[RMDB]
This 177-nucleotide RNA was probed chemically with DMS and 2A3.
2A3 is a SHAPE reagent: it acylates the 2'-hydroxyl of flexible nucleotides of all four kinds.
Source: RMDB library M2PK90, as collected in RNAgym.
The RNA was probed in 150 mM KOAc, 10 mM MgCl2 and 150 mM bicine (pH 8.5) at 24 C.
Reactivities are rounded to 0.1 and cut off at 0 and 3.
RNA sequence: GGGAACGACUCGAGUAGAGUCGAAAAUCUAAGAGCGUAACACACACUGAGACUGUACGACAGUCUGACACACACAUACGCUAGUGUAUCGUGUGUGUGAUAUCGAUGUAGCACGAAAAUGAAAGAAUCGAGCUAUCUAAUUCGUUAGAUAGCUCGAAAAAGAAACAACAACAACAAC
Reactivity to DMS in 0.01 (KOAc 150mM, MgCl2 10mM, bicine 150mM(pH8.5), 24C), signal-to-noise 5, nucleotides 027 to 126: u010c030u010a100a110g010a080g010c060g020u010a090a130c100a070c040a030c050a070c120u010g010a060g010a030c020u000g010u000a110c270g030a170c010a010g020u000c000u000g000a070c020a020c030a000c000a010c010a040u000a020c010g000c200u000a080g020u000g020u000a010u000c140g010u000g010u000g000u000g010u000g000a060u010a070u010c040g000a080u000g010u000a110g010c120a050c030g010a050a040a050a080u010g000a070a090a090g010a100a130
Reactivity to 2A3 in 0.01 (KOAc 150mM, MgCl2 10mM, bicine 150mM(pH8.5), 24C), signal-to-noise 4, nucleotides 027 to 126: u030c020u050a140a000g040a030g130c020g060u080a070a010c020a010c010a000c000a020c060u050g000a000g000a010c010u020g050u220a130c150g130a060c120a000g000u000c000u000g020a010c010a000c010a000c000a000c010a060u040a050c040g090c160u100a150g090u070g010u220a040u080c120g000u000g010u010g000u000g000u000g010a030u030a040u140c070g030a050u050g010u100a000g030c040a010c070g070a050a030a010a140u190g070a050a040a090g100a030a080